[RMDB]
RNA sequence: GGGAACGACUCGAGUAGAGUCGAAAAUAAGCAAAAGACAACCACCUUUCCCGCUGACAAUAGCGUUAUCCCUCUGCACUUCGGUAAUAUGAGGGCACAGUAAAUCCCGCAAGGAUGUGAAUGUGAUUAAACAGUUACAGCUUCGGCUGUAACUGAAGACACGAUAAUUCUUCGGAAUUAUCGUGUCAAAAGAAACAACAACAACAAC
Reactivity to 2A3 in 0.01 (KOAc 150mM, MgCl2 10mM, bicine 150mM(pH8.5), 24C), signal-to-noise 3, nucleotides 027 to 156: u190a010a010g060c060a110a040a020a040g080a060c030a050a060c020c040a070c040c060u070u080u050c050c020c020g000c040u030g000a090c050a090a250u130a100g080c030g110u120u050a140u140c000c000c000u030c010u000g030c030a020c020u000u070c190g080g000u060a050a040u140a070u300g010a000g000g020g000c000a010c010a000g020u030a090a000a000u000c010c010c010g030c040a040a040g020g000a020u040g010u010g230a100a070u040g000u040g010a040u090u230a120a130a040c000a000g000u000u000a000c000a000g020c000u050u080c130g110g010c000u000g010u000a000a000c000u000g000a000a000
Reactivity to DMS in 0.01 (KOAc 150mM, MgCl2 10mM, bicine 150mM(pH8.5), 24C), signal-to-noise 2, nucleotides 027 to 156: u010a080a160g060c060a100a020a130a100g040a120c050a250a160c060c010a200c020c030u010u000u000c010c060c010g000c050u000g000a210c030a090a110u000a040g010c030g020u000u000a060u000c090c000c000u010c000u010g010c080a060c010u000u000c220g000g030u000a080a110u000a150u000g000a030g030g020g050c080a030c040a040g010u000a090a130a060u000c000c010c010g000c020a180a100g010g010a110u010g000u000g040a160a160u000g010u000g040a130u040u000a010a080a190c010a020g000u010u010a040c000a000g010c000u000u000c300g050g010c010u000g030u010a000a000c000u000g000a020a100